Conditions: 150 mM KOAc, 10 mM MgCl2 and 150 mM bicine (pH 8.5), 24 C. An RNA of 207 nucleotides, treated with DMS and 2A3 and read out base by base.
[RMDB]
RNA sequence: GGGAACGACUCGAGUAGAGUCGAAAACGACAAGGGUGUAAAGAUCGCUCUUUUACUCGGCAUGUUACCACCGUUAUCGGGUCAACAGAGUAGUUGCAAAUGACAACAAUGCUCAGGGUUAUGCUCUAAAAGUUCGUACCCUUCGGGGUACGAACAACCGUAAUAGGUAGUUCGCUACCUAUUACGGAAAAGAAACAACAACAACAAC
Reactivity to DMS in 0.01 (KOAc 150mM, MgCl2 10mM, bicine 150mM(pH8.5), 24C), signal-to-noise 3, nucleotides 027 to 156: c070g010a090c090a130a090g020g030g040u000g020u000a100a090a070g000a100u000c050g020c050u000c010u000u000u000u000a040c030u010c010g010g000c050a060u020g010u000u000a060c040c030a100c030c030g040u010u010a080u000c060g010g010g020u000c080a050a100c050a140g000a050g020u000a070g020u000u000g010c020a070a090a180u010g010a110c030a060a040c020a050a090u010g010c010u000c020a090g000g010g020u010u010a080u000g010c030u000c050u000a030a060a070a130g020u000u000c000g030u000a010c030c000c000u000u000c290g060g020g030g030u000a000c010g010a000a010c020a020a020
Reactivity to 2A3 in 0.01 (KOAc 150mM, MgCl2 10mM, bicine 150mM(pH8.5), 24C), signal-to-noise 4, nucleotides 027 to 156: c060g080a010c060a060a050g050g060g020u050g060u180a140a150a030g130a140u190c030g010c040u020c000u010u060u030u050a070c050u020c000g010g010c040a040u130g020u050u090a050c010c020a030c030c010g080u110u130a110u240c060g010g010g040u070c030a030a030c020a060g020a010g020u050a030g010u020u020g000c040a100a210a270u200g050a110c000a030a000c010a030a110u100g020c020u020c050a040g000g000g030u060u090a070u140g030c010u010c020u090a060a090a020a030g000u000u000c000g000u000a000c010c000c000u010u010c050g050g000g000g000u000a000c000g000a000a000c000a000a000